RNA sequence: GGGAACGACUCGAGUAGAGUCGAAAAGAUAUGGAUGCAAGACAUGUCCGAAAAGCACGUUGAAACGGUGCCUCGGAAACGAGGCACCGUGGAGUGCUUAGUAGGACAACAGCUUGCAUCCUAAGUCCACACUAAUAGAGUUCGCUCUAUUAGUGUGAAAAGAAACAACAACAACAAC
Reactivity to 2A3 in 0.01 (KOAc 150mM, MgCl2 10mM, bicine 150mM(pH8.5), 24C), signal-to-noise 2, nucleotides 027 to 126: g030a050u120a060u210g010g000a000u010g000c000a000a000g060a140c090a180u190g000u060c010c010g020a000a000a000a000g040c010a010c050g150u280u070g030a020a040a000c000g000g030u000g000c010c000u000c030g000g070a100a110a080c000g000a000g000g010c000a010c010c000g000u000g000g000a010g000u000g020c000u000u010a000g010u020a020g090g030a000c000a000a000c000a000g040c000u000u010g000c000a010u010c010c000u000a010a000g000u000c010
Reactivity to DMS in 0.01 (KOAc 150mM, MgCl2 10mM, bicine 150mM(pH8.5), 24C), signal-to-noise 6, nucleotides 027 to 126: g010a090u010a300u010g000g000a000u000g020c010a020a000g010a050c130a230u000g010u010c000c000g010a130a220a300a090g000c000a000c000g000u000u010g000a200a170a020c010g010g000u010g000c010c000u000c000g000g000a100a070a180c010g020a020g000g000c000a000c000c000g010u000g000g000a040g020u000g000c000u000u000a020g000u000a130g010g000a010c010a010a030c290a160g000c000u000u000g000c000a000u000c000c010u000a010a090g010u000c040